[RMDB]
Overview
The record gives the reactivity of an RNA of 177 nucleotides to 2A3 and DMS. It was measured as part of the RMDB library OK2TST. 2A3 adducts were read by reverse transcription with SuperScript II with manganese. Conditions: 150 mM KOAc, 10 mM MgCl2 and 150 mM bicine (pH 8.5), 24 C. The DMS profile rests on 2,333 reads.
RNA sequence: GGGAACGACUCGAGUAGAGUCGAAAAUCAGGACGCGACCGGCGGACUCGAAUGUUUGGAGAACGUCCUGCAACCUGGAAUGUUUUCCGUGCGUCGGUAUCGCUGUAAGGCUCGUCGAAGACGCACACGUAAGACCCCUAUUCGUAGGGGUCUUACGAAAAGAAACAACAACAACAAC
Reactivity to 2A3 in 0.01 (KOAc 150mM, MgCl2 10mM, bicine 150mM(pH8.5), 24C), signal-to-noise 3, nucleotides 027 to 126: u080c000a020g030g010a020c010g010c020g090a070c000c050g000g050c040g020g070a040c040u030c280g220a260a160u230g030u100u140u300g050g010a130g000a050a000c000g030u060c000c020u000g020c030a050a000c010c000u000g040g040a090a110u130g070u100u060u050u060c010c030g000u000g020c020g000u010c010g000g050u110a030u080c030g000c040u040g090u080a070a100g080g000c030u060c110g150u070c070g100a080a030g000a010c030g000c010a000c010a000
Reactivity to DMS in 0.01 (KOAc 150mM, MgCl2 10mM, bicine 150mM(pH8.5), 24C), signal-to-noise 3, nucleotides 027 to 126: u000c030a040g030g000a070c120g040c000g020a280c060c060g000g000c010g010g010a130c060u000c160g010a100a060u010g030u000u000u010g030g000a040g010a060a100c010g000u000c000c010u000g010c130a080a090c090c030u000g000g000a020a080u000g010u000u000u020u000c010c050g010u000g020c010g010u000c000g020g000u030a070u010c070g010c010u010g010u010a140a070g000g000c030u010c080g000u010c050g010a260a190g000a070c040g020c030a020c050a210